[RMDB]
RNA sequence: GGGAACGACUCGAGUAGAGUCGAAAAUCCACUAUGAUUCUAGUCACUAAAUAAACACAAUUAGCUACUGUGUGUAAUAGUGAGUGUUGAUAACACAAAAUAAUAGUAUAGUUUUGGAAGAUUAUACGCGCCCUUGCUCCGUUCGCGGAGCAAGGAACUGACGGAUAGUGUUCGCACUAUCCGUCAGAAAAGAAACAACAACAACAAC
Reactivity to 2A3 in 0.01 (KOAc 150mM, MgCl2 10mM, bicine 150mM(pH8.5), 24C), signal-to-noise 3, nucleotides 027 to 156: u030c020c010a030c060u120a210u280g080a190u120u120c070u180a060g100u030c010a010c010u010a030a030a030u030a010a050a000c010a000c010a020a050u170u150a100g060c060u160a040c050u040g000u000g010u000g020u030a030a020u010a020g000u000g010a030g010u030g020u010u050g090a210u190a200a030c040a020c060a060a010a090a080u240a150a060u060a090g010u010a010u000a020g020u010u020u110u140g150g000a110a050g000a050u010u000a020u010a020c040g030c010g040c050c000c000u000u000g000c000u000c000c000g050u060u020c150g010c020g070g000a000g000c000a000a000g000g000a000a010
Reactivity to DMS in 0.01 (KOAc 150mM, MgCl2 10mM, bicine 150mM(pH8.5), 24C), signal-to-noise 2, nucleotides 027 to 156: u000c020c020a170c140u010a060u040g000a110u000u010c060u010a130g000u000c010a010c010u020a020a000a070u020a080a260a030c000a020c010a060a100u000u000a210g030c180u010a070c060u000g010u000g010u010g040u000a100a300u000a020g020u000g030a100g010u000g030u000u020g020a160u010a070a140c040a070c020a060a030a050a080u010a070a220u010a040g000u000a040u000a050g010u000u000u000u010g000g000a210a150g000a060u000u000a010u000a020c060g000c070g010c060c010c000u000u010g000c000u000c000c010g020u000u010c280g030c000g030g000a000g000c000a000a010g030g010a020a010